[RMDB]
RNA sequence: GGGAACGACUCGAGUAGAGUCGAAAAAUGGCUUCAUGUUUUAUGUAAGCUUACAGCUGUAUGCUAAGUUUAAUUAGUUAAUGCUGCUAAUUAUGAAGCCUAAAAAGUUGUGUUUCCCUCGCUAUCCCUGUGCACAUAUUUUCGAAUAUGUGCACAGAAAAGAAACAACAACAACAAC
Reactivity to DMS in 0.01 (KOAc 150mM, MgCl2 10mM, bicine 150mM(pH8.5), 24C), signal-to-noise 3, nucleotides 027 to 126: a110u010g000g010c010u000u000c010a010u010g020u010u010u000u010a060u030g010u010a070a070g010c120u010u000a100c060a030g000c020u010g040u010a090u010g010c020u020a020a060g000u020u020u030a080a120u000u000a020g000u000u010a070a100u020g010c020u000g020c040u000a040a030u000u020a020u000g000a020a010g000c000c010u000a030a050a080a050a030g000u000u020g000u000g000u000u010u000c010c010c010u010c120g000c100u010a090u010c120c090
Reactivity to 2A3 in 0.01 (KOAc 150mM, MgCl2 10mM, bicine 150mM(pH8.5), 24C), signal-to-noise 4, nucleotides 027 to 126: a000u080g000g000c000u000u000c010a000u000g140u110u060u040u060a120u220g090u040a190a030g080c030u030u050a060c010a030g030c020u120g090u280a040u230g040c000u000a000a060g010u150u130u160a150a120u010u060a000g030u000u130a100a030u150g000c030u000g000c000u000a000a000u080u060a000u040g000a010a000g000c000c000u000a050a020a000a000a000g030u040u030g000u010g020u040u050u020c000c000c020u010c100g000c020u060a080u120c030c000
Record summary
An RNA of 177 nucleotides, treated with DMS and 2A3 and read out base by base. The data come from the RNA Mapping Database (RMDB), libraries RFM100 and RFMREP. The reactions ran in a buffer of 150 mM KOAc, 10 mM MgCl2 and 150 mM bicine (pH 8.5), at 24 C. Values cover nucleotides 27 to 126.